Conditions: 150 mM KOAc, 10 mM MgCl2 and 150 mM bicine (pH 8.5), 24 C. An RNA of 177 nucleotides, treated with 2A3 and DMS and read out base by base. For 2A3 the reverse transcriptase was SuperScript II with manganese. 2A3 is a SHAPE reagent: it acylates the 2'-hydroxyl of flexible nucleotides of all four kinds. For DMS, 1,446 sequencing reads were counted. Values cover nucleotides 27 to 126. For 2A3, 1,513 sequencing reads were counted.
RNA sequence: GGGAACGACUCGAGUAGAGUCGAAAAUAAAAGGAGGAGGAGAAAUAUAGCGCGAGAUCGGUCCUCCCACGCGCGUCUCCCGCUGAUAAGCGGAAUAAGAGGAUGAUUAAUAGAUAGCGCGCAAAAACCCACUCUAUAGAUUCGUCUAUAGAGUGGGAAAAGAAACAACAACAACAAC
Reactivity to 2A3 in 0.01 (KOAc 150mM, MgCl2 10mM, bicine 150mM(pH8.5), 24C), signal-to-noise 1, nucleotides 027 to 126: u130a000a050a020a010g080g010a050g010g000a020g040g020a050g050a100a120a030u230a040u100a080g030c040g000c020g000a030g020a050u050c030g000g060u000c020c000u020c010c000c000a070c060g180c000g020c000g020u000c010u000c000c010c000g000c000u010g020a140u080a200a090g000c010g000g040a010a090u150a080a050g040a040g080g000a020u030g010a000u080u260a160a120u060a090g010a010u000a020g000c010g010c000g000c000a000a040a050a050a050
Reactivity to DMS in 0.01 (KOAc 150mM, MgCl2 10mM, bicine 150mM(pH8.5), 24C), signal-to-noise 2, nucleotides 027 to 126: u010a050a080a090a160g020g010a100g020g000a040g010g000a110g010a070a080a100u020a130u020a120g000c010g000c010g020a060g000a090u010c020g010g010u010c010c030u000c000c030c040a070c110g010c050g040c030g000u000c020u000c060c000c010g010c010u000g010a100u010a050a050g000c000g000g000a110a040u010a130a110g000a070g010g010a010u000g000a120u000u010a100a120u000a120g010a050u000a050g010c000g010c000g000c080a060a060a030a050a060
DMS adducts were read by reverse transcription with MarathonRT.